[RMDB]
RNA sequence: GGGAACGACUCGAGUAGAGUCGAAAAUCCACGUCCUUCGGGACGUGGAAAAUACGGCACGGGAGCCGAAGAAAUCCCCAAGCGCAGUGCAGCGCAGCACAAAAAGGUGAGUCUUCGGACUCACCAACACUAUUGGUGACUUCGGUCACCAAUAGUGAAAAGAAACAACAACAACAAC
Reactivity to DMS in 0.01 (KOAc 150mM, MgCl2 10mM, bicine 150mM(pH8.5), 24C), signal-to-noise 3, nucleotides 027 to 126: u000c000c000a010c000g000u000c000c000u010u010c150g050g020g000a000c010g050u000g000g000a000a010a050a050u010a100c030g000g000c010a080c160g020g000g010a150g020c000c000g000a040a090g010a070a070a160u010c020c000c000c220a060a140g020c020g030c020a120g030u000g040c140a150g000c000g040c020a100g020c110a080c110a060a090a030a070a110g010g020u000g000a020g010u000c000u000u020c240g000g000a010c000u000c000a010c000c000a050a060
Reactivity to 2A3 in 0.01 (KOAc 150mM, MgCl2 10mM, bicine 150mM(pH8.5), 24C), signal-to-noise 3, nucleotides 027 to 126: u000c000c000a010c020g010u030c010c010u030u100c180g070g000g010a000c000g000u000g000g010a000a000a000a000u050a000c000g000g040c050a010c060g160g120g060a050g000c040c050g020a030a020g090a020a100a040u040c010c010c010c000a140a090g030c030g000c050a060g090u190g140c020a070g000c060g000c050a020g070c050a050c030a030a070a020a020a020g010g000u000g000a000g000u010c000u030u070c220g060g000a010c010u020c000a000c010c010a000a000
Chemical mapping of a 177-nucleotide RNA with DMS and 2A3. DMS (dimethyl sulfate) methylates the pairing face of unpaired adenines and cytosines. The 2A3 profile rests on 3,653 reads. Conditions: 150 mM KOAc, 10 mM MgCl2 and 150 mM bicine (pH 8.5), 24 C. It was measured as part of the RMDB library M2PK50.